This 177-nucleotide RNA was probed chemically with 2A3 and DMS.
The RNA was probed in 150 mM KOAc, 10 mM MgCl2 and 150 mM bicine (pH 8.5) at 24 C.
2A3 adducts were read by reverse transcription with SuperScript II with manganese.
[RMDB]
RNA sequence: GGGAACGACUCGAGUAGAGUCGAAAAUACUCAUGGGAAGUCGGCACAACUCCCGACUAACGGGGAGGUCCGCCGUCUAGCUCAUUGGUCGGAGCUGUUGUGCGGACGUUGAGUAACAGCUAGCCAACAUAGUCGGCUAAUUCGUUAGCCGACUAUGAAAAGAAACAACAACAACAAC
Reactivity to 2A3 in 0.01 (KOAc 150mM, MgCl2 10mM, bicine 150mM(pH8.5), 24C), signal-to-noise 2, nucleotides 027 to 126: u040a000c000u010c010a000u010g040g050g110a080a020g010u000c010g120g000c010a000c000a020a010c010u010c000c000c000g000a000c000u000a030a020c040g000g000g000g020a030g020g050u030c010c040g010c010c000g040u000c000u000a000g030c000u000c000a020u010u020g000g000u020c020g040g010a030g040c080u000g010u000u010g000u000g000c010g030g000a000c000g010u010u010g000a000g010u010a040a020c000a010g030c040u080a000g040c000c010a000a010
Reactivity to DMS in 0.01 (KOAc 150mM, MgCl2 10mM, bicine 150mM(pH8.5), 24C), signal-to-noise 3, nucleotides 027 to 126: u030a040c010u000c020a040u020g000g010g040a070a140g020u000c010g000g010c000a040c030a040a080c000u020c040c000c000g010a020c030u000a020a030c140g000g020g000g020a090g000g010u010c040c040g010c060c020g000u010c010u010a060g000c010u000c010a130u000u010g000g000u010c030g000g000a030g010c060u020g000u010u000g000u000g000c010g010g000a010c040g010u010u010g020a050g000u010a020a090c150a090g010c110u010a050g000c050c010a060a240